[RMDB]
RNA sequence: GGGAACGACUCGAGUAGAGUCGAAAAGCGCGGAUCACUGGACACGUCAAGACGGUCACGGACGCGGCCGCGAAGUAUGCGGGCGGCGCGUACCCGGUGCUGCGUGAUGUGAAGGUCGUCGUCGACGCCGCCGACAAGGCGCUCGGCAGCGCGGCCCGGUCAAGGUGUAGUUCGCUACACCUUGACCAAAAGAAACAACAACAACAAC
Reactivity to 2A3 in 0.01 (KOAc 150mM, MgCl2 10mM, bicine 150mM(pH8.5), 24C), signal-to-noise 2, nucleotides 027 to 156: g010c010g000c030g010g030a050u090c000a020c030u080g030g040a140c130a040c300g020u040c040a040a040g110a060c040g040g000u090c020a020c060g000g010a000c000g000c010g050g030c020c000g000c030g040a140a060g160u190a080u300g120c110g060g040g040c030g020g000c010g010c000g000u140a230c000c000c000g000g000u080g000c000u000g010c000g030u080g000a060u040g010u010g100a100a020g000g000u000c000g000u020c040g010u010c000g040a020c090g050c080c040g020c010c010g030a100c090a160a120g020g000c000g040c060u000c000g010g000c010a090g010c030g000c000g040g020c020c000c060
An RNA of 207 nucleotides, treated with 2A3 and read out base by base.
The 2A3 profile rests on 1,299 reads.
2A3 adducts were read by reverse transcription with SuperScript II with manganese.
Source: RMDB library OK3TST, as collected in RNAgym.
The RNA was probed in 150 mM KOAc, 10 mM MgCl2 and 150 mM bicine (pH 8.5) at 24 C.